Chemical mapping of a 207-nucleotide RNA with 2A3 and DMS. DMS adducts were read by reverse transcription with MarathonRT.

RNA sequence: GGGAACGACUCGAGUAGAGUCGAAAAAGAUCGAUUACGAUCGAUCAAUGAUGCCCCUCACCCACCUCUGAAGAACCCAGGUGGGCGAGGGAACGGAGCACGGGAUCACGAGCAGUACGCUGCUCGAAAAAGAACUAGACCUUCGGGUCUAGUUCAACGUUAAUUUUAUGUUCGCAUAAAAUUAACGAAAAGAAACAACAACAACAAC
Reactivity to 2A3 in 0.01 (KOAc 150mM, MgCl2 10mM, bicine 150mM(pH8.5), 24C), signal-to-noise 5, nucleotides 027 to 156: a010g010a000u010c000g000a010u040u090a090c180g040a010u020c000g000a000u000c000a000a080u190g070a060u140g050c000c000c000c000u000c000a020c000c000c000a000c010c000u040c040u100g150a200a150g050a110a090c040c030c020a010g000g000u000g000g000g000c000g000a000g000g000g010a010a020c060g060g050a050g040c080a040c100g060g020g030a060u080c080a020c130g010a010g000c010a000g020u050a020c220g030c100u000g000c000u000c000g020a010a000a000a000a000g000a000a000c000u000a000g000a000c010c000u030u100c250g090g000g010u000c000u000a000g000u000u010c000a000a000
Reactivity to DMS in 0.01 (KOAc 150mM, MgCl2 10mM, bicine 150mM(pH8.5), 24C), signal-to-noise 2, nucleotides 027 to 156: a090g000a010u000c020g030a050u010u000a090c200g020a110u000c020g000a030u000c030a110a080u010g010a140u010g010c050c000c020c000u000c020a010c060c000c010a030c010c000u020c050u010g020a170a290g010a110a180c120c060c020a060g040g020u000g010g010g020c070g000a020g030g000g010a010a020c040g000g020a120g010c020a120c060g010g000g000a160u000c000a140c000g020a030g000c010a090g020u000a110c300g030c020u000g010c010u000c010g000a000a030a040a090a080g010a020a000c000u000a010g020a030c000c020u000u010c300g080g000g060u010c000u010a000g000u000u000c000a030a120